[RMDB]
RNA sequence: GGGAACGACUCGAGUAGAGUCGAAAAUGCACUACUGGGGAGAUGAGCUGCACGAAUACUUGCAGGGUACGGCGAAUACUUACACUUUUACGGUAAAUGCAAAGCAUCCAGACGCGCAGCAUGUCAAAGCUGGGAAUAAGGUAGCAUUUACUUACAAAUUUCAUAAGAGGUUCGCCUCUUAUGAAAUAAAAGAAACAACAACAACAAC
Reactivity to 2A3 in 0.01 (KOAc 150mM, MgCl2 10mM, bicine 150mM(pH8.5), 24C), signal-to-noise 2, nucleotides 027 to 156: u080g020c030a020c040u080a000c030u070g000g010g010g010a030g020a020u070g020a020g050c020u020g000c060a030c090g080a080a070u090a190c050u040u090g020c030a040g020g000g020u040a030c030g010g010c010g020a030a050u070a110c050u110u100a030c080a090c080u090u120u110u160a080c090g020g000u000a010a000a000u010g010c030a110a100a080g020c010a030u050c020c000a020g030a090c020g030c020g000c040a000g020c010a030u140g060u130c030a070a040a060g010c000u000g000g060g080a030a060u110a070a040g040g000u030a010g000c000a010u010u000u010a000c000u010u030a030c040a010a140
Reactivity to DMS in 0.01 (KOAc 150mM, MgCl2 10mM, bicine 150mM(pH8.5), 24C), signal-to-noise 2, nucleotides 027 to 156: u000g000c020a110c040u000a070c040u020g030g000g020g010a170g000a070u000g000a090g010c000u010g020c060a060c050g000a170a080u010a050c010u000u000g010c020a050g010g010g010u010a060c090g000g020c020g020a040a080u000a050c050u020u000a060c080a090c050u020u000u000u000a130c160g030g010u000a000a010a000u000g010c010a040a080a140g010c060a140u000c030c000a110g030a010c060g010c210g010c010a120g000c010a070u000g030u000c050a060a090a180g020c020u000g010g000g000a050a110u000a070a070g010g040u000a170g030c020a020u000u000u000a040c030u010u000a110c100a060a110
This 207-nucleotide RNA was probed chemically with 2A3 and DMS.
Reactivities are given for positions 27 through 156.
For DMS, 3,071 sequencing reads were counted.
The RNA was probed in 150 mM KOAc, 10 mM MgCl2 and 150 mM bicine (pH 8.5) at 24 C.
2A3 adducts were read by reverse transcription with SuperScript II with manganese.